[RMDB]
RNA sequence: GGGAACGACUCGAGUAGAGUCGAAAAAGCUGGUAGUACUACGGUACUACCAGCAUAAUUCGUGGUUCGAAAACCUCCCACGCAAAAAAACUAAGGAAAAACGCCGAGUAGUACGCGACUCGGCGAAGGUACCGGAAUCAGUUCGCUGAUUCCGGAAGUAUUUACCGGAGUUCGCUCCGGUAAAUACAAAAGAAACAACAACAACAAC
Reactivity to 2A3 in 0.01 (KOAc 150mM, MgCl2 10mM, bicine 150mM(pH8.5), 24C), signal-to-noise 1, nucleotides 027 to 156: a000g000c010u000g000g010u010a000g000u000a000c010u000a010c170g080g020u000a010c020u010a000c000c000a000g000c010a010u000a000a070u050u030c030g000u010g020g020u020u050c090g090a080a130a190a240c000c050u030c000c010c010a040c020g090c070a060a050a010a050a020a020a020c100u190a020a090g030g090a130a030a010a000a000c000g000c010c020g000a000g010u050a010g030u060a050c120g010c070g080a020c000u010c000g000g000c000g000a000a000g020g000u040a050c000c000g000g000a000a000u000c000a000g120u070u100c160g030c130u000g000a010u000u000c000c000g010g010a000a000
Chemical mapping of a 207-nucleotide RNA with 2A3.
Source: RMDB library M2RFPK, as collected in RNAgym.
Conditions: 150 mM KOAc, 10 mM MgCl2 and 150 mM bicine (pH 8.5), 24 C.